An RNA of 177 nucleotides, treated with DMS and 2A3 and read out base by base. Reactivities are given for positions 27 through 126. The RNA was probed in 150 mM KOAc, 10 mM MgCl2 and 150 mM bicine (pH 8.5) at 24 C.
RNA sequence: GGGAACGACUCGAGUAGAGUCGAAAAGAAAUAGUGCCUUCAUGCCUACAGAGGGGCGAGACGAAGUGCGUGAAAAGCGCCGAAGUCAAGUAGAGCGGCUGAUCUCUAUGCUGACGGCCGAGACUCAAAUAGCCGUACGAUUCGUCGUACGGCUAUUAAAAGAAACAACAACAACAAC
Reactivity to DMS in 0.01 (KOAc 150mM, MgCl2 10mM, bicine 150mM(pH8.5), 24C), signal-to-noise 3, nucleotides 027 to 126: g010a050a130a090u030a090g030u020g000c000c000u000u020c020a010u010g000c020c000u000a110c130a090g030a100g010g030g010g000c020g000a130g020a040c040g000a160a240g050u020g010c000g000u020g000a060a050a180a150g000c020g000c000c010g030a220a160g000u000c050a070a090g020u020a090g020a070g030c040g030g010c030u010g020a080u030c050u020c060u030a070u020g010c120u000g000a050c060g000g020c000c020g020a060g000a100c050u020c070a060
Reactivity to 2A3 in 0.01 (KOAc 150mM, MgCl2 10mM, bicine 150mM(pH8.5), 24C), signal-to-noise 3, nucleotides 027 to 126: g120a010a130a000u230a020g060u060g110c010c000u060u030c020a010u190g090c020c010u060a100c130a030g050a050g030g020g020g010c110g030a110g000a010c060g030a100a050g080u140g260c000g020u150g060a140a060a000a000g000c000g030c000c000g060a030a010g040u020c010a000a030g100u130a030g010a010g070c000g010g000c050u050g300a300u000c000u000c000u090a170u160g070c030u020g030a010c020g000g000c020c000g030a010g080a050c030u020c050a090